[RMDB]
RNA sequence: GGGAACGACUCGAGUAGAGUCGAAAAGCCGGAGGAGCAAAGGUGAUUAGAGACCCCUGUAGUUCCGGCCGUAAACUAUGCCAACUGGGUGUUACGUAGUGGUACCCACGAGAAAUCAAGUAUAUGGAUACAAUGCGAAUUUCGAUUCGCAUUGUAUAAAAGAAACAACAACAACAAC
Reactivity to 2A3 in 0.01 (KOAc 150mM, MgCl2 10mM, bicine 150mM(pH8.5), 24C), signal-to-noise 8, nucleotides 027 to 126: g000c010c010g000g000a050g040g050a080g050c080a070a040a010g020g010u100g050a160u090u260a100g070a020g030a140c020c010c000c000u010g040u100a050g050u070u000c000c000g000g020c000c000g030u030a040a020a010c040u050a020u200g030c030c010a040a040c070u030g010g020g020u050g040u040u020a090c180g100u120a060g040u040g050g010u040a030c000c020c020a010c020g040a060g080a050a080a040u110c070a090a010g080u050a080u030a030u200g110g020
Reactivity to DMS in 0.01 (KOAc 150mM, MgCl2 10mM, bicine 150mM(pH8.5), 24C), signal-to-noise 9, nucleotides 027 to 126: g010c020c000g020g010a080g010g010a240g000c030a050a110a070g000g000u020g010a150u020u030a140g010a260g010a150c100c030c030c060u000g010u010a170g010u020u000c000c000g000g000c000c020g010u010a040a060a050c050u010a050u030g000c110c030a050a260c300u000g010g000g010u010g020u010u000a040c030g000u020a090g020u000g000g000u000a040c010c000c010a020c090g000a260g010a080a100a110u020c070a070a070g000u000a070u020a070u020g000g000

The record gives the reactivity of an RNA of 177 nucleotides to 2A3 and DMS.
High DMS reactivity at an A or C suggests that its Watson-Crick edge is free.